[RMDB]
RNA sequence: GGGAACGACUCGAGUAGAGUCGAAAAAUUGAGGGAUAAUACAGGCUCUCCCAUCCAACUCCUAUUCCAACACGUCCUCGUCGUACAGAGUGGUAACAUGUGUCACCACAUAUCCAAGCUUGGGGACAAAAGCCAACUACGUUCGCGUAGUUGGCAAGACUACUGUAUUGUUCGCAAUACAGUAGUCAAAAGAAACAACAACAACAAC
Reactivity to 2A3 in 0.01 (KOAc 150mM, MgCl2 10mM, bicine 150mM(pH8.5), 24C), signal-to-noise 8, nucleotides 027 to 156: a000u150u130g030a080g010g010g010a020u080a200a080u180a240c100a080g080g020c020u010c000u010c020c020c010a050u080c030c020a040a060c020u030c030c020u060a120u110u070c040c030a050a030c040a030c160g010u000c000c000u030c020g110u040c030g020u080a060c050a070g080a020g070u010g010g010u050a060a010c030a120u200g120u080g050u190c030a020c040c010a010c010a030u110a040u070c050c030a060a040g030c050u100u120g030g000g000g000a000c000a000a020a000a000g000c000c000a000a000c000u000a000c000g030u010u040c070g000c000g130u000a000g000u000u000g000g000c000a000a000
Reactivity to DMS in 0.01 (KOAc 150mM, MgCl2 10mM, bicine 150mM(pH8.5), 24C), signal-to-noise 2, nucleotides 027 to 156: a120u000u000g000a050g010g000g010a130u000a110a150u000a130c080a130g020g010c090u000c020u010c030c040c010a100u000c070c030a090a070c040u000c020c020u000a090u000u000c050c030a100a100c060a070c110g000u010c000c000u000c020g020u000c040g000u000a160c110a080g010a090g040u010g010g010u000a010a010c010a160u000g030u000g010u010c030a040c020c020a000c010a100u010a080u010c010c070a030a170g000c040u000u000g000g010g000g000a050c040a020a030a050a150g000c000c000a000a000c000u000a000c010g000u010u010c300g030c020g030u000a010g020u000u000g010g030c010a000a010
The record gives the reactivity of an RNA of 207 nucleotides to 2A3 and DMS. In probing experiments dimethyl sulfate is read out at A N1 and C N3, which are open when not base-paired. The RNA was probed in 150 mM KOAc, 10 mM MgCl2 and 150 mM bicine (pH 8.5) at 24 C. It was measured as part of the RMDB library M2RFPK. For DMS the reverse transcriptase was MarathonRT. The 2A3 profile rests on 7,502 reads.